[RMDB]
Chemical mapping of a 207-nucleotide RNA with 2A3.
For 2A3, 1,270 sequencing reads were counted.
Reactivities are given for positions 27 through 156.

RNA sequence: GGGAACGACUCGAGUAGAGUCGAAAACCCGGGCGCUUGAGACCCGGCAAAUGCUAAACGGAUCGUUCUCGCUUGACGGCGACGAAUACCCACUCUGUAUUCAGGAACCGACGCUUGGUGAACUGGAGGACAUUGAUGCGGAGUCGGGACCUGACGCCGGCUAUUAACUAUUCGUAGUUAAUAGCCGAAAAGAAACAACAACAACAAC
Reactivity to 2A3 in 0.01 (KOAc 150mM, MgCl2 10mM, bicine 150mM(pH8.5), 24C), signal-to-noise 3, nucleotides 027 to 156: c000c010c000g010g010g000c110g000c140u260u300g110a080g030a200c000c000c000g020g010c030a170a230a130u130g020c030u150a130a080a000c060g000g030a050u110c050g030u030u010c020u000c020g010c030u060u170g120a070c070g010g010c010g010a020c090g000a040a030u080a100c010c000c030a060c050u070c040u060g020u060a130u060u080c010a000g010g060a060a030c030c000g060a080c080g120c110u100u180g060g000u070g080a160a060c050u120g030g080a070g050g000a040c010a040u050u150g060a040u160g060c030g040g000a030g010u000c000g010g010g020a030c000c010u020g030a030c030g030c060